This 207-nucleotide RNA was probed chemically with 2A3 and DMS.
For 2A3 the reverse transcriptase was SuperScript II with manganese.
The DMS profile rests on 4,936 reads.

[RMDB]
RNA sequence: GGGAACGACUCGAGUAGAGUCGAAAAAGCGCCAUGGUUACCGGUAUGCAGCAAAUCUACCAGCCCACUACAGUCAACAACAUGUCGGUGAGCGAGUGGUCCGAAACGUUUCGCGACAUGCUUCGACAUGAGCACGUCACCUUGCUGGCCAACAUUACUUACCAUGUAGGUUCGCCUACAUGGUAAGAAAAGAAACAACAACAACAAC
Reactivity to 2A3 in 0.01 (KOAc 150mM, MgCl2 10mM, bicine 150mM(pH8.5), 24C), signal-to-noise 5, nucleotides 027 to 156: a010g090c040g010c010c010a060u080g020g040u070u110a050c020c020g020g010u080a040u100g030c010a030g010c030a100a060a060u040c040u070a060c020c030a030g040c010c020c030a040c020u110a030c030a070g040u080c060a070a040c000a040a020c010a150u030g010u040c020g000g060u120g040a000g010c030g040a060g130u110g040g060u020c020c040g020a050a110a130c120g050u060u090u110c040g000c010g010a030c020a010u060g000c000u090u130c040g050a040c010a030u030g000a020g010c030a000c050g040u060c020a040c020c020u020u060g010c020u030g000g030c010c010a040a030c010a070u060u130a060
Reactivity to DMS in 0.01 (KOAc 150mM, MgCl2 10mM, bicine 150mM(pH8.5), 24C), signal-to-noise 2, nucleotides 027 to 156: a080g000c050g030c050c010a080u020g010g050u010u010a070c050c000g000g060u000a060u000g050c060a080g010c070a070a090a060u000c020u020a100c050c020a110g010c030c010c030a080c030u010a060c080a120g040u010c030a070a120c030a090a120c040a050u000g000u000c030g050g010u000g020a040g000c010g020a060g030u000g010g010u030c060c050g000a030a050a090c140g000u000u000u000c060g030c020g010a060c010a040u010g000c010u010u000c060g030a100c060a060u010g010a060g000c010a050c030g020u000c000a070c000c020u000u010g020c010u030g000g000c050c040a030a050c070a050u000u000a160
The 2A3 profile rests on 4,435 reads. The RNA was probed in 150 mM KOAc, 10 mM MgCl2 and 150 mM bicine (pH 8.5) at 24 C. The data come from the RNA Mapping Database (RMDB), library OK3TST. For DMS the reverse transcriptase was MarathonRT. Values cover nucleotides 27 to 156. Values are in units of 0.01, from 0 to 300, in steps of 10.